This 170-nucleotide RNA was probed chemically with 2A3 and DMS. For 2A3 the reverse transcriptase was SuperScript II with manganese. Reactivities are given for positions 27 through 129. Conditions: 150 mM KOAc, 10 mM MgCl2 and 150 mM bicine (pH 8.5), 24 C. For DMS the reverse transcriptase was MarathonRT.
RNA sequence: GGGAACGACUCGAGUAGAGUCGAAAAUCCUCCUUCGGAUGCCCAGGUCGGACCGCGGGGAGGUGGAGAUGCCAUGCCGACCCGAAGAGGAAAGAAGGACUCGGACGCGAACCCGUAAGGUGAAACUAAAUCUCUAGCUUCGGCUAGAGAAAAAGAAACAACAACAACAAC
Reactivity to 2A3 in 0.01 (KOAc 150mM, MgCl2 10mM, bicine 150mM(pH8.5), 24C), signal-to-noise 4, nucleotides 027 to 129: u000c010c000u050c030c030u050u090c040g040g000a040u100g010c000c000c020a000g070g020u030c040g010g020a060c020c000g000c030g010g000g000g000a000g000g000u050g010g000a090g000a020u190g090c040c010a080u160g000c010c020g030a040c020c000c020g030a040a010g010a030g030g000a080a000a000g040a000a010g000g000a030c010u020c090g010g020a030c050g000c010g000a030a040c020c000c030g000u020a050a010g030g010u020g000a100a030a000c030u050a070a020a180
Reactivity to DMS in 0.01 (KOAc 150mM, MgCl2 10mM, bicine 150mM(pH8.5), 24C), signal-to-noise 3, nucleotides 027 to 129: u030c010c010u010c110c050u000u040c090g010g000a080u010g020c060c030c030a020g010g060u000c050g050g020a140c040c030g030c000g000g020g020g000a070g010g030u050g000g030a150g000a060u000g010c110c040a070u040g050c000c000g000a040c000c040c000g030a080a050g000a120g060g000a060a040a060g030a060a000g000g040a070c060u030c130g000g000a030c100g010c110g020a090a040c000c000c000g000u000a020a040g040g010u050g050a070a050a050c040u110a040a080a140